The record gives the reactivity of an RNA of 177 nucleotides to 2A3 and DMS.
For 2A3 the reverse transcriptase was SuperScript II with manganese.
For 2A3, 1,844 sequencing reads were counted.

RNA sequence: GGGAACGACUCGAGUAGAGUCGAAAAAUGGUCAGUCCCGGGUGCAUAAGGAGUGGUGGAUGGUUCAGGACCGAAAGGUAGCAGACAAAAGCCACCGCGCGGUGCAGUGGCCGGACUGCGCUUGUGACUUACCCGGCUAAUUCGUUAGCCGGGUAAGAAAAGAAACAACAACAACAAC
Reactivity to 2A3 in 0.01 (KOAc 150mM, MgCl2 10mM, bicine 150mM(pH8.5), 24C), signal-to-noise 3, nucleotides 027 to 126: a000u180g040g000u090c010a010g000u090c060c050c000g020g010g020u020g000c030a040u070a220a150g150g010a090g030u040g000g000u030g040g040a080u050g100g010u070u040c000a000g030g000a000c010c000g020a040a030a000g010g000u020a010g000c010a020g010a000c000a010a230a030a030g000c000c000a010c000c010g000c010g000c020g030g020u030g000c000a010g050u120g120g050c000c000g000g000a010c000u000g000c020g010c020u090u140g070u070g080a010
Reactivity to DMS in 0.01 (KOAc 150mM, MgCl2 10mM, bicine 150mM(pH8.5), 24C), signal-to-noise 3, nucleotides 027 to 126: a060u050g020g000u000c000a020g000u000c090c030c000g010g030g000u010g000c010a030u020a090a110g010g000a150g050u020g010g010u000g010g010a040u000g000g030u020u000c010a300g000g010a010c000c000g000a100a100a120g000g000u000a000g000c000a180g040a030c010a040a040a100a160g000c010c000a010c000c030g020c000g000c060g010g010u010g000c000a050g040u030g020g010c010c020g000g010a050c020u010g010c100g020c070u020u000g000u020g010a190

The reactions ran in a buffer of 150 mM KOAc, 10 mM MgCl2 and 150 mM bicine (pH 8.5), at 24 C.